[RMDB]
RNA sequence: GGGAACGACUCGAGUAGAGUCGAAAAUUGUAAGUGUUUAAGAGCGUACGGUGGAUGCCUUGGCACCAGGAGCCGAUGAAGGACGUAGGAGGCUGCGAUAAGCCUCGGGGAGCUGUCAACCGAGCUGGAGAGGAAAUUAAUUCGUUAAUUUCCUCUCAAAAGAAACAACAACAACAAC
Reactivity to DMS in 0.01 (KOAc 150mM, MgCl2 10mM, bicine 150mM(pH8.5), 24C), signal-to-noise 9, nucleotides 027 to 126: u010u010g010u000a080a120g010u010g000u000u000u010a060a100g010a100g010c040g010u010a060c070g020g020u010g000g010a080u010g010c030c030u010u010g010g010c040a080c060c050a110g000g010a120g010c030c040g000a080u010g010a110a100g010g000a070c050g010u020a070g010g010a030g010g010c010u000g000c110g010a120u020a080a080g000c030c010u000c010g000g010g000g010a070g010c040u000g010u000c050a060a090c070c040g000a090g010c090u010g000
Reactivity to 2A3 in 0.01 (KOAc 150mM, MgCl2 10mM, bicine 150mM(pH8.5), 24C), signal-to-noise 7, nucleotides 027 to 126: u120u080g060u110a130a120g050u020g080u060u060u100a130a050g070a030g040c040g020u110a050c050g060g030u040g040g020a040u070g000c000c030u030u070g020g000c040a040c040c010a040g050g050a020g030c020c020g020a080u120g060a060a050g040g010a030c040g010u040a050g030g070a000g010g000c010u010g000c020g030a020u020a140a010g000c010c000u000c010g000g000g000g000a030g010c030u030g030u080c030a040a040c030c000g020a020g010c050u070g050